Conditions: 150 mM KOAc, 10 mM MgCl2 and 150 mM bicine (pH 8.5), 24 C. This 177-nucleotide RNA was probed chemically with DMS and 2A3.
[RMDB]
RNA sequence: GGGAACGACUCGAGUAGAGUCGAAAAGCGCAGAAGCGCCGGCCAAAUACGUGCAAGCAGCCCGCUGUAAAACGUAGGGCGCGAGCGUUGUCCGGAUUUGUUGGGCGUAAAGAGCUCCGCAGGCGGCAAUAAUAUUUUAUUUCGAUAAAGUAUUAUUAAAAGAAACAACAACAACAAC
Reactivity to DMS in 0.01 (KOAc 150mM, MgCl2 10mM, bicine 150mM(pH8.5), 24C), signal-to-noise 9, nucleotides 027 to 126: g010c030g020c020a080g010a130a150g010c030g020c000c010g000g010c070c070a060a110a070u010a030c030g010u000g010c100a090a180g000c020a120g010c050c080c140g000c000u000g010u010a090a080a130a070c120g000u000a050g020g000g010c010g010c050g000a190g000c010g010u010u010g010u010c030c000g000g000a100u020u020u000g000u010u010g000g010g010c020g010u020a050a110a170g010a150g000c010u000c020c040g010c020a070g000g000c030g000g010c080
Reactivity to 2A3 in 0.01 (KOAc 150mM, MgCl2 10mM, bicine 150mM(pH8.5), 24C), signal-to-noise 3, nucleotides 027 to 126: g020c010g000c010a030g040a210a010g020c010g000c000c000g030g000c010c000a000a010a040u120a000c010g010u020g030c020a040a050g000c010a040g020c000c000c000g020c010u020g030u110a020a040a010a000c030g010u050a220g010g000g000c020g000c010g020a020g000c010g000u010u020g010u000c010c010g000g030a080u080u010u030g030u020u050g030g020g000c000g000u030a010a080a000g070a010g000c000u000c010c020g000c000a020g010g030c000g000g000c010

2A3 adducts were read by reverse transcription with SuperScript II with manganese.
The DMS profile rests on 52,014 reads.